The record gives the reactivity of an RNA of 177 nucleotides to 2A3 and DMS. For 2A3 the reverse transcriptase was SuperScript II with manganese. The data come from the RNA Mapping Database (RMDB), library TTRDEL.

[RMDB]
RNA sequence: GGGAACGACUCGAGUAGAGUCGAAAAGAUAUGGAUCACGGUAGGGAGAAAGUCGGAAACGACAUUUCAUCGAUCUACGGUGAUCCUAAGUCAAAGAAACUAAGUUCGUUCGCGAACUUAGUUUCAACACCACUGAAUACUUCGGUAUUCAGUGGUGAAAAGAAACAACAACAACAAC
Reactivity to 2A3 in 0.01 (KOAc 150mM, MgCl2 10mM, bicine 150mM(pH8.5), 24C), signal-to-noise 3, nucleotides 027 to 126: g010a010u050a040u150g000g000a010u000c020a000c090g230g000u010a020g060g130g000a040g000a010a020a010g010u010c020g030g030a040a050a020c010g010a010c090a130u020u050u030c110a180u260c030g100a060u030c010u000a000c110g130g000u000g000a000u010c000c000u010a000a000g000u020c030a050a000a200g000a010a010a000c010u010a000a000g000u000u010c010g020u030u140c290g020c000g200a000a000c000u000u000a000g000u000u000u000c000a000a000
Reactivity to DMS in 0.01 (KOAc 150mM, MgCl2 10mM, bicine 150mM(pH8.5), 24C), signal-to-noise 4, nucleotides 027 to 126: g010a040u000a300u000g000g010a000u000c010a000c000g020g010u000a010g010g000g020a180g010a010a040a040g010u000c000g010g010a090a070a190c010g000a010c020a140u000u010u000c060a220u000c120g000a120u010c010u000a000c000g010g020u000g010a000u000c000c000u010a000a090g000u000c050a110a100a120g000a020a010a000c000u000a000a010g000u000u000c000g000u000u010c190g020c000g010a000a000c000u000u000a000g000u000u000u000c000a110a210